[RMDB]
RNA sequence: GGGAACGACUCGAGUAGAGUCGAAAAGGCAGGACGGACACUUGCCGCAGGACGGGAUGAAUGCCAACACCACGUGAUCGCCCGGGGCGAAGUCGUCGACUCCCGGGCCGACCUCGGUGACGAUGCCGAUCCUCCACGUUUUCGAACGUGGAGGAUCAAAAGAAACAACAACAACAAC
Reactivity to 2A3 in 0.01 (KOAc 150mM, MgCl2 10mM, bicine 150mM(pH8.5), 24C), signal-to-noise 1, nucleotides 027 to 126: g000g000c060a000g000g030a050c050g010g050a040c090a000c060u010u070g030c010c010g000c020a070g000g090a030c070g030g000g030a030u080g070a080a110u100g030c010c040a030a060c010a020c010c000a010c070g000u040g040a100u020c020g000c000c000c000g010g010g030g000c060g040a100a010g120u220c140g140u030c000g070a080c020u070c060c000c000g000g010g000c000c000g000a000c000c010u040c040g000g000u010g030a030c050g070a030u090g060c040c020
Reactivity to DMS in 0.01 (KOAc 150mM, MgCl2 10mM, bicine 150mM(pH8.5), 24C), signal-to-noise 1, nucleotides 027 to 126: g030g000c020a030g000g000a060c060g000g000a160c040a060c060u000u010g000c000c020g010c080a080g000g000a140c110g010g010g000a030u000g000a040a060u010g000c110c050a060a290c070a090c050c000a080c100g050u020g030a050u000c070g000c020c000c010g000g000g020g000c020g000a050a080g010u020c090g000u000c050g000a060c040u000c000c000c000g010g000g010c030c030g010a010c000c000u000c090g000g000u000g000a080c150g000a100u000g030c080c110
Chemical mapping of a 177-nucleotide RNA with 2A3 and DMS. For 2A3 the reverse transcriptase was SuperScript II with manganese. For DMS the reverse transcriptase was MarathonRT.